[RMDB]
Chemical mapping of a 207-nucleotide RNA with 2A3. The data come from the RNA Mapping Database (RMDB), library ARCHII.

RNA sequence: GGGAACGACUCGAGUAGAGUCGAAAAUGGGCUUCUUAGUACGUGGCAAGAUCCAAGGAAGCUGGCAUCCCGGGUAGCGUGCGCCUGCGCGACUUGGGAGGCGAGACUCAAAACAGAACGCUAAACAUGUAGAUCUGCCCGGCGAAGGCUUGCGGACCUGAAUCAAACACUUCGGUGUUUGAUUCAGAAAAGAAACAACAACAACAAC
Reactivity to 2A3 in 0.01 (KOAc 150mM, MgCl2 10mM, bicine 150mM(pH8.5), 24C), signal-to-noise 1, nucleotides 027 to 156: u080g010g000g000c000u070u000c000u030u100a050g000u160a160c090g040u160g020g000c010a050a040g000a040u010c000c010a000a030g040g020a070a010g000c050u030g080g000c010a080u000c010c000c000g040g000g000u020a010g000c000g010u050g130c160g060c110c110u110g070c000g000c000g000a000c000u000u040g030g000g000a000g000g010c020g010a000g000a030c000u030c000a000a060a080a150c040a050g120a140a020c040g030c050u110a150a160a010c060a040u080g030u210a000g000a000u000c000u000g030c020c000c030g000g000c050g020a060a000g060g010c000u000u060g130c000g020g050a010c000

The reactions ran in a buffer of 150 mM KOAc, 10 mM MgCl2 and 150 mM bicine (pH 8.5), at 24 C.